[RMDB]
RNA sequence: GGGAACGACUCGAGUAGAGUCGAAAAUAUCGACCUCGAAUGAGGUCGAGAGUCGUGCAAAUAAGAGGCUCGACAGAUGCACGACAAAGCGAGCCUACAGGCGUCGAGGAAAACUCGACGCCAAAAACGUCUUCGACGAGUUCGCUCGUUGAAGACGAAAAGAAACAACAACAACAAC
Reactivity to DMS in 0.01 (KOAc 150mM, MgCl2 10mM, bicine 150mM(pH8.5), 24C), signal-to-noise 3, nucleotides 027 to 126: u010a020u000c000g000a000c000c010u000c000g010a140a090u070g010a000g000g010u000c000g000a010g000a100g000u000c000g000u000g020c000a060a020a110u030a090a110g000a060g010g000c000u000c000g020a140c120a130g000a110u010g000c000a010c010g000a020c030a040a230a120g010c050g000a000g020c010c010u000a120c160a080g000g010c010g010u010c000g020a010g000g000a070a060a100a100c010u000c000g010a000c000g050c000c000a000a010a050a080a060
Reactivity to 2A3 in 0.01 (KOAc 150mM, MgCl2 10mM, bicine 150mM(pH8.5), 24C), signal-to-noise 3, nucleotides 027 to 126: u160a000u000c000g000a000c000c000u020c010g160a180a190u300g000a000g000g000u000c000g020a000g010a000g020u000c000g000u000g000c010a000a030a060u110a080a110g030a040g040g000c000u000c010g010a010c020a030g060a010u010g010c000a010c000g000a000c010a000a020a000g020c020g000a000g000c000c010u020a020c030a020g000g000c000g000u000c000g000a010g010g040a030a070a030a030c000u000c000g000a000c000g000c000c000a000a000a000a000a000
About this RNA
Conditions: 150 mM KOAc, 10 mM MgCl2 and 150 mM bicine (pH 8.5), 24 C. The record gives the reactivity of an RNA of 177 nucleotides to DMS and 2A3. DMS adducts were read by reverse transcription with MarathonRT.